[RMDB]
RNA sequence: GGGAACGACUCGAGUAGAGUCGAAAAGGAUCGUUGGCACGCAUCGAUCGGAUGCGUUCGCGCUUCGCAUUCGAUCUAAUAGGCUGAUAAGCUUGAUGCGUGGAGCGCGUAGGACGAUCGAAAGAAAGGGAUAAACUAUCUUCGGAUAGUUUAUCCCAAAAGAAACAACAACAACAAC
Reactivity to 2A3 in 0.01 (KOAc 150mM, MgCl2 10mM, bicine 150mM(pH8.5), 24C), signal-to-noise 5, nucleotides 027 to 126: g110g000a010u030c040g010u050u050g090g070c060a010c000g000c010a000u000c010g060a070u060c020g010g000a010u020g000c010g010u030u030c060g010c010g020c170u020u010c010g000c000a010u010u050c000g030a020u000c000u060a140a130u060a130g040g000c010u040g050a250u180a300a030g000c010u020u040g000a000u000g000c010g000u050g010g010a020g020c130g000c030g040u120a110g120g010a000c000g010a000u040c050g010a060a050a010g140a040a020a030
Reactivity to DMS in 0.01 (KOAc 150mM, MgCl2 10mM, bicine 150mM(pH8.5), 24C), signal-to-noise 5, nucleotides 027 to 126: g010g000a010u000c000g030u000u000g010g030c120a040c000g000c000a000u010c020g010a070u010c100g010g000a020u000g020c000g000u010u020c040g000c090g010c060u010u010c010g000c010a020u010u000c070g000a040u010c030u040a080a110u020a060g010g010c010u000g010a160u070a110a050g000c010u000u000g010a020u000g020c030g010u010g000g000a060g000c050g010c050g010u020a070g000g000a010c000g000a010u010c000g000a110a070a120g000a070a120a090
Structure probing data (2A3 and DMS) for a 177-nucleotide construct. The reactions ran in a buffer of 150 mM KOAc, 10 mM MgCl2 and 150 mM bicine (pH 8.5), at 24 C. Source: RMDB library OK1LIB, as collected in RNAgym. For 2A3 the reverse transcriptase was SuperScript II with manganese. DMS adducts were read by reverse transcription with MarathonRT. The 2A3 profile rests on 6,364 reads.